[RMDB]
RNA sequence: GGGAACGACUCGAGUAGAGUCGAAAAGCUUCAUUGAUAUUGACGGUGCUACAGUCGUUAGCGAUCCGUUAUCCUCGCAAGAAUUUGCCCGGUAGCGUAUAAGCAAAACACAAAUCUAUCCAUGCAAGUUGCCAGUUCAUUUCGAUGAACUGGCAACAAAAGAAACAACAACAACAAC
Reactivity to 2A3 in 0.01 (KOAc 150mM, MgCl2 10mM, bicine 150mM(pH8.5), 24C), signal-to-noise 2, nucleotides 027 to 126: g030c010u000u030c000a050u040u220g110a070u090a080u070u190g000a000c020g000g000u040g030c000u040a040c000a170g150u070c060g080u070u000a050g020c000g010a020u010c010c000g000u000u000a050u100c030c050u040c120g000c080a060a000g050a060a250u010u070u040g030c000c050c000g000g040u020a000g020c030g000u090a050u000a070a010g030c000a040a070a100a000c050a020c030a050a100a010u100c090u030a010u040c010c050a030u070g020c000a000a110
Chemical mapping of a 177-nucleotide RNA with 2A3. Conditions: 150 mM KOAc, 10 mM MgCl2 and 150 mM bicine (pH 8.5), 24 C. The 2A3 profile rests on 906 reads. For 2A3 the reverse transcriptase was SuperScript II with manganese.